[RMDB]
RNA sequence: GGGAACGACUCGAGUAGAGUCGAAAAGCCUUACGAUUCGUCGUAAGGCAUACAAAGUUUUGGCACUAUGAGCCCGCAGCCUUGGUGCUCCCACGCGGUGCAAUACGACGGAUUUCGAUCCGUCGAAGUGUCGUAUCUCGUUCGCGAGAUACGACACAAAAGAAACAACAACAACAAC
Reactivity to DMS in 0.01 (KOAc 150mM, MgCl2 10mM, bicine 150mM(pH8.5), 24C), signal-to-noise 1, nucleotides 027 to 126: g040c020c020u000u000a000c000g010a000u000u010c300g020u000c000g000u000a000a010g010g000c000a010u000a060c030a090a040a130g010u000u000u020u000g000g000c040a030c030u010a060u000g000a100g030c000c000c040g000c000a150g000c030c050u010u000g040g040u000g000c040u000c010c040c010a180c150g060c080g040g000u050g010c040a090a080u000a140c020g000a010c000g000g010a030u000u000u000c220g030a020u000c040c000g000u000c000g000a010a090
Reactivity to 2A3 in 0.01 (KOAc 150mM, MgCl2 10mM, bicine 150mM(pH8.5), 24C), signal-to-noise 1, nucleotides 027 to 126: g020c000c000u000u020a000c000g000a020u020u080c160g030u000c000g010u140a000a010g000g040c000a000u020a000c010a000a110a040g030u020u060u100u160g040g000c020a020c020u070a070u190g060a030g020c000c050c010g090c060a020g000c000c030u020u050g060g010u110g000c020u030c000c020c010a060c030g040c050g000g050u060g000c000a040a050u140a090c010g000a000c010g000g010a010u020u040u090c180g070a030u000c010c030g000u010c020g000a010a020